An RNA of 177 nucleotides, treated with DMS and 2A3 and read out base by base.
2A3 adducts were read by reverse transcription with SuperScript II with manganese.
[RMDB]
RNA sequence: GGGAACGACUCGAGUAGAGUCGAAAAGAUAUGGAGCUAAGGGAGUGAGUAAGCUUGAACUACACGGUCUACCUCGGAAACGAGGUAGCCGUGCAAGCUUACUCACGAAGAACUUAGCUCCUAAGUCGUCAACGUAUAUGUUCGCAUAUACGUUGACAAAAGAAACAACAACAACAAC
Reactivity to DMS in 0.01 (KOAc 150mM, MgCl2 10mM, bicine 150mM(pH8.5), 24C), signal-to-noise 2, nucleotides 027 to 126: g010a090u000a300u000g000g000a020g020c000u000a010a030g000g000g010a080g040u000g010a030g000u000a000a000g020c000u010u010g000a100a010c090u030a300c010a000c000g000g000u010c010u000a040c010c000u000c000g030g010a110a110a280c000g030a010g030g030u000a000g010c000c000g030u010g000c000a000a000g000c010u000u000a010c000u000c010a000c000g000a030a120g000a160a150c020u000u000a000g000c010u000c000c000u010a000a150g010u000c110
Reactivity to 2A3 in 0.01 (KOAc 150mM, MgCl2 10mM, bicine 150mM(pH8.5), 24C), signal-to-noise 1, nucleotides 027 to 126: g050a010u120a080u290g000g000a000g000c000u010a020a000g010g000g010a060g030u000g000a000g000u000a020a010g000c000u000u000g010a070a040c100u200a040c300a000c030g000g110u170c050u010a000c000c020u020c030g000g060a130a110a060c000g000a020g000g000u000a010g000c000c000g040u000g020c010a000a030g000c020u000u000a000c000u000c010a000c000g000a000a000g000a020a000c000u020u000a000g000c000u010c000c000u020a020a010g040u020c090
2A3 is a SHAPE reagent: it acylates the 2'-hydroxyl of flexible nucleotides of all four kinds. For DMS the reverse transcriptase was MarathonRT. High DMS reactivity at an A or C suggests that its Watson-Crick edge is free. It was measured as part of the RMDB library TTRINS. Conditions: 150 mM KOAc, 10 mM MgCl2 and 150 mM bicine (pH 8.5), 24 C.